[RMDB]
RNA sequence: GGGAACGACUCGAGUAGAGUCGAAAAGAUAUGGAGCUUUACAAUUCUACCCACCAGUGGAACUACCAGGACCGACUCGGAAACGAGUCUAGUACUGGCCACUGAGGAAUUGUAAAGCUCCUAAGUCCUUUCUUAAGUUCUUCGGAACUUAAGAAAGAAAAGAAACAACAACAACAAC
Reactivity to DMS in 0.01 (KOAc 150mM, MgCl2 10mM, bicine 150mM(pH8.5), 24C), signal-to-noise 3, nucleotides 027 to 126: g010a070u020a270u000g000g010a010g020c010u010u000u010a000c000a010a020u000u000c030u010a130c100c070c150a300c170c010a000g020u000g000g000a020a030c030u040a300c010c000a010g000g010a080c300c300g010a010c010u000c000g000g000a060a110a160c010g000a010g000u000c000u010a010g020u000a040c000u000g000g020c010c010a010c000u010g000a060g000g000a020a000u000u000g000u000a000a000a000g000c000u000c000c010u000a010a080g000u000c010
Reactivity to 2A3 in 0.01 (KOAc 150mM, MgCl2 10mM, bicine 150mM(pH8.5), 24C), signal-to-noise 1, nucleotides 027 to 126: g030a000u120a070u200g000g000a010g000c030u000u000u000a010c010a000a020u020u010c000u090a300c110c090c010a020c010c000a000g000u020g010g120a200a090c130u300a120c300c000a000g000g010a000c010c000g010a000c000u000c020g010g000a040a020a040c000g000a000g000u000c010u030a000g000u000a010c000u010g020g030c000c000a000c020u000g000a000g040g030a000a000u000u000g000u000a000a010a000g010c000u000c000c000u000a000a000g030u010c000
Source information:
This 177-nucleotide RNA was probed chemically with DMS and 2A3. DMS adducts were read by reverse transcription with MarathonRT.